[RMDB]
RNA sequence: GGGAACGACUCGAGUAGAGUCGAAAAACGAGUCCGUACGCCGACUCGAAGGGCCCCAGAAGACCAAGGGGCCCAAACCUACCACUCAUUAGAUGCAUGGAAAUCACUAGGUGAUACGUCACCUAGAACACGCUUUUAAGCUUCGGCUUAAAAGCAACCACUUUAAUUCCUUCGGGAAUUAAAGUGGAAAAGAAACAACAACAACAAC
Reactivity to 2A3 in 0.01 (KOAc 150mM, MgCl2 10mM, bicine 150mM(pH8.5), 24C), signal-to-noise 3, nucleotides 027 to 156: a000c000g000a010g020u080c130c060g060u100a070c150g060c110c040g030a000c000u000c000g000a010a010g010g000g000c000c010c000c010a120g110a300a040g070a160c080c070a130a060g010g000g020g020c020c000c000a020a000a000c010c000u050a080c010c040a030c030u110c020a050u030u170a070g060a110u070g100c080a040u100g100g080a010a140a090u220c060a050c060u000a010g000g000u000g010a020u000a040c220g060u000c030a000c000c000u010a010g000a010a000c060a020c120g000c000u000u000u000u000a010a000g000c010u000u150c200g100g000c000u000u000a000a000a000a000g000c000a000a000
Reactivity to DMS in 0.01 (KOAc 150mM, MgCl2 10mM, bicine 150mM(pH8.5), 24C), signal-to-noise 1, nucleotides 027 to 156: a130c000g000a030g060u000c060c050g030u000a080c110g030c010c030g000a010c000u000c010g010a090a050g010g030g060c000c000c000c030a180g010a130a200g000a180c050c060a170a190g000g020g050g000c000c000c000a000a010a060c100c040u000a050c020c020a090c060u000c030a120u000u000a150g020a070u010g000c050a130u000g010g000a130a120a170u000c030a180c000u000a000g000g040u010g000a070u000a060c240g000u000c020a020c000c000u020a020g060a020a130c080a070c050g000c000u000u000u000u000a000a040g000c020u000u000c300g020g030c000u000u000a000a000a000a000g060c000a000a020